The record gives the reactivity of an RNA of 207 nucleotides to 2A3 and DMS.
For 2A3 the reverse transcriptase was SuperScript II with manganese.
The data come from the RNA Mapping Database (RMDB), library OK3TST.
DMS adducts were read by reverse transcription with MarathonRT.
Values are in units of 0.01, from 0 to 300, in steps of 10.
Conditions: 150 mM KOAc, 10 mM MgCl2 and 150 mM bicine (pH 8.5), 24 C.

RNA sequence: GGGAACGACUCGAGUAGAGUCGAAAACACUCGAACGACCUCGGUGAAGGGGGCGUAGAGGUUCCGGUCCCCGACGGGUACGUAAGACUCUUCCCACUCCGACGGGUCGUAGUUGAGCAGGAACUCCCAGGAGCCCCCCUGCCCUCGUCGGUAGGUGUAGAUACGUAUAGUUCGCUAUACGUAUCUAAAAAGAAACAACAACAACAAC
Reactivity to 2A3 in 0.01 (KOAc 150mM, MgCl2 10mM, bicine 150mM(pH8.5), 24C), signal-to-noise 4, nucleotides 027 to 156: c040a030c020u050c010g070a110a020c000g040a040c000c030u140c080g070g040u200g120a120a120g010g000g000g010g000c030g030u110a080g030a090g110g000u070u050c040c040g030g120u060c020c010c000c010g040a050c040g030g000g000u150a140c020g030u040a100a020g070a090c020u020c000u050u010c000c000c000a000c040u020c030c010g020a030c020g010g010g020u070c070g050u050a080g070u060u150g030a050g030c030a020g020g020a020a030c010u070c000c010c030a070g080g040a040g000c050c000c000c000c020c010u000g000c000c010c000u040c020g020u000c010g010g020u040a030g000g000u030g020
Reactivity to DMS in 0.01 (KOAc 150mM, MgCl2 10mM, bicine 150mM(pH8.5), 24C), signal-to-noise 3, nucleotides 027 to 156: c060a110c010u020c020g020a120a120c000g040a080c040c000u000c020g040g050u010g010a120a110g000g030g030g030g010c040g050u010a090g010a080g010g020u000u000c030c040g000g020u000c040c000c010c030g020a060c090g000g030g000u000a050c050g030u010a100a150g000a080c030u010c040u000u010c010c000c010a130c070u010c020c020g010a090c040g020g000g020u010c060g000u000a050g020u000u010g020a120g050c070a130g010g000a100a050c030u000c000c030c120a210g060g000a080g040c020c000c030c050c000c000u010g000c000c000c010u000c100g000u000c030g010g000u000a020g020g010u010g000